[RMDB]
RNA sequence: GGGAACGACUCGAGUAGAGUCGAAAACGGCGACACAGUUGGCUAUGAACUUAGGAAGGACACAUACCACUUACUGAGCAAUUUUGACAUUAUUUAUUGUAAUCAUAAUUAUUACAUGGUCAACACAAUCUCGGAUCGAGUUCGCUCGAUCCGAGAUAAAAGAAACAACAACAACAAC
Reactivity to 2A3 in 0.01 (KOAc 150mM, MgCl2 10mM, bicine 150mM(pH8.5), 24C), signal-to-noise 2, nucleotides 027 to 126: c000g190g000c000g040a000c010a000c000a210g020u030u010g050g000c010u000a000u040g020a000a000c010u030u080a050g010g000a000a200g030g100a060c030a000c020a140u300a220c000c020a020c050u070u030a030c050u000g030a000g010c060a070a070u000u000u000u110g020a020c020a130u000u010a100u030u300u120a060u000u250g000u020a000a010u110c000a060u000a080a040u040u120a090u000u160a000c000a000u010g020g000u020c000a000a000c020a030c020a050